[RMDB]
RNA sequence: GGGAACGACUCGAGUAGAGUCGAAAAGAUAUGGAGCCAGUGUGGAGCGAAGGGAUCGGAAACGAUCCCAAUUCGCGAUGAAACACGGCUCCUAAGUCAAAAGUAGUGAACGUUCGCGUUCACUACACUCUAAUCCGUAGUUCGCUACGGAUUAGAGAAAAGAAACAACAACAACAAC
Reactivity to DMS in 0.01 (KOAc 150mM, MgCl2 10mM, bicine 150mM(pH8.5), 24C), signal-to-noise 4, nucleotides 027 to 126: g020a020u000a010u010g000g000a020g010c000c000a060g020u000g010u010g010g000a010g040c010g020a010a070g000g010g010a000u000c010g010g000a010a000a010c000g000a000u000c000c000c000a000a010u010u000c000g010c000g000a070u010g000a220a270a010c010a000c010g000g020c000u000c000c000u010a000a070g010u000c000a110a080a150a170g020u000a010g030u000g010a010a010c000g000u000u010c300g020c020g020u000u000c000a000c000u000a000c010a090
Reactivity to 2A3 in 0.01 (KOAc 150mM, MgCl2 10mM, bicine 150mM(pH8.5), 24C), signal-to-noise 2, nucleotides 027 to 126: g000a000u000a000u070g000g000a000g000c030c090a080g020u030g030u020g020g030a010g000c020g000a050a060g020g000g000a000u010c000g010g000a010a000a000c010g000a000u010c020c010c030a010a040u050u000c000g000c010g100a300u020g000a000a000a000c000a000c000g000g000c000u000c000c000u000a010a000g000u000c010a020a010a030a080g010u010a000g000u000g000a020a010c010g020u080u080c300g000c000g140u000u000c010a000c000u000a000c000a030
Structure probing data (DMS and 2A3) for a 177-nucleotide construct. The RNA was probed in 150 mM KOAc, 10 mM MgCl2 and 150 mM bicine (pH 8.5) at 24 C. Values cover nucleotides 27 to 126. The 2A3 profile rests on 17,514 reads. It was measured as part of the RMDB library TTRDES.